[RMDB]
RNA sequence: GGGAACGACUCGAGUAGAGUCGAAAACAACUGACAUGCAGUAAGCACGAGGCAUAAAACGUCUUACCUCUGCUACGAGGGCAUCCCUCGUUUGAGCUGUUUCAGUACUGUCGUCAGCUCGCACAUCAUCGCCUGGUAAUUUCGAUUACCAGGCGAUAAAAGAAACAACAACAACAAC
Reactivity to DMS in 0.01 (KOAc 150mM, MgCl2 10mM, bicine 150mM(pH8.5), 24C), signal-to-noise 3, nucleotides 027 to 126: c070a100a300c060u010g000a000c020a050u000g000c010a030g010u000a060a040g040c000a000c150g010a000g000g000c230a080u000a090a020a100a070c280g000u010c100u050u000a250c020c010u000c000u020g000c000u000a000c010g000a010g000g000g020c190a100u060c140c000c000u000c000g000u000u000u000g000a010g010c150u020g000u040u030u000c000a000g010u000a030c080u000g000u070c300g030u000c000a000g030c040u030c080g010c150a130c170a140u050c080
Reactivity to 2A3 in 0.01 (KOAc 150mM, MgCl2 10mM, bicine 150mM(pH8.5), 24C), signal-to-noise 6, nucleotides 027 to 126: c010a010a020c010u020g010a010c000a060u220g010c000a000g010u020a010a000g030c010a010c200g020a010g020g030c080a090u180a150a160a030a040c110g190u040c050u060u070a050c000c000u010c010u010g000c010u030a020c000g010a020g020g040g010c110a300u300c010c000c000u020c010g000u000u010u110g050a050g020c170u090g130u170u170u040c020a000g020u030a030c030u070g040u060c060g010u000c010a020g030c040u040c040g080c040a090c000a100u160c020
Conditions: 150 mM KOAc, 10 mM MgCl2 and 150 mM bicine (pH 8.5), 24 C.
An RNA of 177 nucleotides, treated with DMS and 2A3 and read out base by base.
High 2A3 reactivity points to a flexible backbone, as in loops and unpaired stretches.
For 2A3, 3,477 sequencing reads were counted.
2A3 adducts were read by reverse transcription with SuperScript II with manganese.
It was measured as part of the RMDB library OK1LIB.